RNA sequence: GGGAACGACUCGAGUAGAGUCGAAAAUCAGUGGCAUUAUUCUCACACAGCUUCAAGUCUCCAUUCGUAACCUAAGAGAAAGAAUUCAAUGCCAGUGUAGAGUGAGUUUGGUCAAGAGGAAGGAGAGCACAACGUCAGUGUUCGCACUGACGUUGUGAAAAGAAACAACAACAACAAC
Reactivity to 2A3 in 0.01 (KOAc 150mM, MgCl2 10mM, bicine 150mM(pH8.5), 24C), signal-to-noise 1, nucleotides 027 to 126: u080c000a030g120u020g020g000c030a000u000u060a070u100u170c010u010c040a040c000a010c000a060g060c010u110u100c060a040a060g070u000c030u010c050c000a060u070u060c090g040u040a000a050c000c000u020a110a000g120a020g040a210a040a000g030a090a080u080u120c060a080a010u070g020c000c040a060g000u020g030u100a060g010a050g070u070g000a000g010u030u030u130g000g050u070c060a090a060g020a010g020g010a040a050g000g060a070g010a040g010
Reactivity to DMS in 0.01 (KOAc 150mM, MgCl2 10mM, bicine 150mM(pH8.5), 24C), signal-to-noise 2, nucleotides 027 to 126: u010c050a060g030u000g010g000c010a030u030u000a120u000u010c040u000c080a130c130a110c090a060g020c080u000u010c050a050a110g010u000c000u000c040c030a130u000u000c070g000u020a100a050c090c020u010a120a100g000a080g000a030a080a080g020a050a070u010u000c160a050a050u000g000c000c010a060g010u010g000u000a090g000a080g020u000g010a070g010u000u000u010g000g010u000c050a050a060g000a060g000g000a060a080g010g000a080g000a090g020
Description
The record gives the reactivity of an RNA of 177 nucleotides to 2A3 and DMS. The RNA was probed in 150 mM KOAc, 10 mM MgCl2 and 150 mM bicine (pH 8.5) at 24 C. It was measured as part of the RMDB library OK2TRN.